[RMDB]
Notes:
Chemical mapping of a 177-nucleotide RNA with 2A3 and DMS. High 2A3 reactivity points to a flexible backbone, as in loops and unpaired stretches. For DMS, 3,872 sequencing reads were counted.
RNA sequence: GGGAACGACUCGAGUAGAGUCGAAAAUAUACGUCAUCCUAUUUUAGUGACAGCGAUGCAACAUGGUAGAUAUAUGGUUAUAGAUGGUGUGCAUCGGUAUACAAGUUUGAAAGCGUUAGGAUGUAAGGAUGAUAAGGUCGUUCGCGACCUUAUCAUCAAAAGAAACAACAACAACAAC
Reactivity to 2A3 in 0.01 (KOAc 150mM, MgCl2 10mM, bicine 150mM(pH8.5), 24C), signal-to-noise 2, nucleotides 027 to 126: u280a020u050a020c060g060u010c060a000u000c000c000u000a150u010u110u090u050a180g050u140g080a030c050a080g040c000g000a000u000g000c000a140a160c000a070u070g080g170u300a050g220a020u040a000u000a170u100g180g120u300u100a030u030a120g230a150u130g200g070u110g050u020g000c000a010u010c000g010g000u040a000u010a000c100a000a140g100u020u060u170g170a100a040a000g000c020g000u020u020a010g010g030a000u000g000u030a000a070g140
Reactivity to DMS in 0.01 (KOAc 150mM, MgCl2 10mM, bicine 150mM(pH8.5), 24C), signal-to-noise 3, nucleotides 027 to 126: u050a100u030a090c160g000u000c040a030u000c000c020u020a020u020u050u020u040a100g010u020g000a080c140a190g020c000g050a010u000g000c000a020a040c000a000u000g010g010u020a050g020a070u000a010u000a120u010g020g030u050u010a040u000a050g000a060u030g060g010u000g020u000g020c000a000u000c000g010g000u030a100u060a010c170a050a110g010u000u020u040g050a100a080a100g010c080g040u010u000a020g030g000a000u000g000u020a130a100g010